An RNA of 207 nucleotides, treated with DMS and 2A3 and read out base by base. The RNA was probed in 150 mM KOAc, 10 mM MgCl2 and 150 mM bicine (pH 8.5) at 24 C. The DMS profile rests on 17,270 reads. High 2A3 reactivity points to a flexible backbone, as in loops and unpaired stretches.
[RMDB]
RNA sequence: GGGAACGACUCGAGUAGAGUCGAAAAUGGUGAUGUCAAACAACCACAGAUUGUGUCUACACGGGUGGCUGAGAUAGUGAUCCCUUUACUUUCUGAUGGUUCAAUGAAACAAAUUCAUGUUGAGACUUGGGUGUCAUUGCCAAGAUAACUCAUUUUGAAUAGAUGUAUUCUUCGGAAUACAUCUAUUAAAAGAAACAACAACAACAAC
Reactivity to DMS in 0.01 (KOAc 150mM, MgCl2 10mM, bicine 150mM(pH8.5), 24C), signal-to-noise 6, nucleotides 027 to 156: u010g030g020u010g020a070u010g020u000c040a080a140a150c050a060a070c010c010a080c040a050g010a100u000u000g010u010g010u020c080u010a110c100a090c080g010g030g040u000g010g020c030u010g010a180g000a160u010a060g040u000g000a110u000c010c010c020u000u010u000a040c030u000u000u000c030u000g010a110u000g010g000u000u010c040a080a100u010g010a130a060a120c030a030a070a140u000u000c030a070u000g010u010u000g010a300g000a120c040u000u000g010g010g010u010g020u000c070a110u000u000g010c010c030a040a110g010a110u010a050a060c050u020c040a130u010u010u000u010g000
Reactivity to 2A3 in 0.01 (KOAc 150mM, MgCl2 10mM, bicine 150mM(pH8.5), 24C), signal-to-noise 8, nucleotides 027 to 156: u080g020g010u030g030a070u050g050u070c030a060a050a060c010a040a060c030c010a010c010a020g030a010u030u060g020u020g070u100c110u160a100c110a050c160g030g000g020u070g040g000c010u040g060a060g050a180u190a100g060u050g080a120u150c010c000c000u010u100u040a030c000u010u050u000c010u020g280a300u020g020g020u050u050c030a040a040u080g070a070a050a030c060a030a100a050u130u110c050a050u110g060u110u100g060a070g030a140c000u030u040g020g000g020u080g080u100c040a060u040u080g020c000c000a010a010g040a080u070a040a040c000u010c060a060u070u100u090u080g060